An RNA of 177 nucleotides, treated with DMS and 2A3 and read out base by base. The data come from the RNA Mapping Database (RMDB), library OK1LIB. Conditions: 150 mM KOAc, 10 mM MgCl2 and 150 mM bicine (pH 8.5), 24 C. 2A3 adducts were read by reverse transcription with SuperScript II with manganese.
RNA sequence: GGGAACGACUCGAGUAGAGUCGAAAAGAAAGAAAGAAAAGGCCAAAGAAGCGCACGAAAAGAAAAGAAAAACGUGCGCGUCGGAAUGCACGACCGACAAGAAAGGCCAAGAAAUCGUGCAUGAAAACCACGAUAUGGUAUUCGUACCAUAUCGUGGAAAAGAAACAACAACAACAAC
Reactivity to DMS in 0.01 (KOAc 150mM, MgCl2 10mM, bicine 150mM(pH8.5), 24C), signal-to-noise 2, nucleotides 027 to 126: g010a180a090a150g010a120a080a010g030a070a110a140a050g010g010c010c000a080a090a100g030a080a200g020c010g000c000a000c000g030a020a010a050a070g000a100a070a140a210g030a090a130a090a100a110c010g000u010g010c000g000c020g000u000c000g000g020a060a070u000g000c000a010c010g000a090c000c050g000a050c010a040a100g000a090a100a050g010g120c000c000a020a080g000a000a020a120u000c000g000u000g020c000a050u020g000a090a020a070a150
Reactivity to 2A3 in 0.01 (KOAc 150mM, MgCl2 10mM, bicine 150mM(pH8.5), 24C), signal-to-noise 2, nucleotides 027 to 126: g090a010a050a010g100a040a140a030g090a020a240a000a030g000g000c030c000a180a070a000g110a150a020g020c040g000c000a000c030g020a030a100a040a050g140a000a050a020a000g210a020a090a000a000a000c020g020u000g000c020g000c000g000u010c000g000g000a120a020u010g020c000a000c000g010a030c000c000g010a000c000a030a030g130a100a000a010g010g010c020c000a000a010g000a020a040a000u030c010g010u010g000c010a000u000g000a000a020a000a000